This 207-nucleotide RNA was probed chemically with 2A3 and DMS. For 2A3 the reverse transcriptase was SuperScript II with manganese. For DMS the reverse transcriptase was MarathonRT. The RNA was probed in 150 mM KOAc, 10 mM MgCl2 and 150 mM bicine (pH 8.5) at 24 C.
[RMDB]
RNA sequence: GGGAACGACUCGAGUAGAGUCGAAAAGCACUUUGGCCGGCUCGGAAUAGAAUCAGGGGGUGCAAACUGCCCACUGGCAGAAAGGAUUAUAGCAAAUGCGUACCCUAUUGCAAUACAGCCCGGCCAACAUAGACUACUCUAUUCGUAGAGUAGUCAACGGAACAGUAGUAUUCGUACUACUGUUCCGAAAAGAAACAACAACAACAAC
Reactivity to 2A3 in 0.01 (KOAc 150mM, MgCl2 10mM, bicine 150mM(pH8.5), 24C), signal-to-noise 4, nucleotides 027 to 156: g030c000a020c060u100u020u020g000g010c020c000g000g040c030u100c110g050g030a110a080u100a120g080a030a040u150c070a100g000g020g000g000g020u020g020c010a050a030a100c010u020g000c000c000c060a190c230u150g010g000c020a010g050a080a050a000g130g000a060u130u130a100u290a160g050c030a090a130a050u070g000c040g030u100a090c010c010c000u050a070u000u110g070c050a040a040u060a100c010a010g030c040c030c000g000g000c000c000a000a000c000a020u060a010g000a000c000u000a010c000u000c000u010a030u060u070c150g060u040a000g000a000g000u000a000g010u000c000a000a000
Reactivity to DMS in 0.01 (KOAc 150mM, MgCl2 10mM, bicine 150mM(pH8.5), 24C), signal-to-noise 1, nucleotides 027 to 156: g030c080a080c110u010u000u000g010g020c000c030g020g030c030u000c060g060g070a120a200u000a130g020a050a120u010c110a060g010g000g050g000g050u020g070c030a050a040a110c120u000g040c020c000c070a160c120u000g050g000c030a000g010a210a110a150g000g020a170u000u000a120u000a160g000c110a020a070a110u000g000c050g000u000a120c040c000c010u000a100u010u000g080c070a140a090u000a100c040a090g030c200c010c000g090g000c020c000a000a050c100a180u000a100g000a020c010u000a000c000u000c010u000a030u000u000c260g020u020a000g030a040g000u000a010g020u000c000a000a070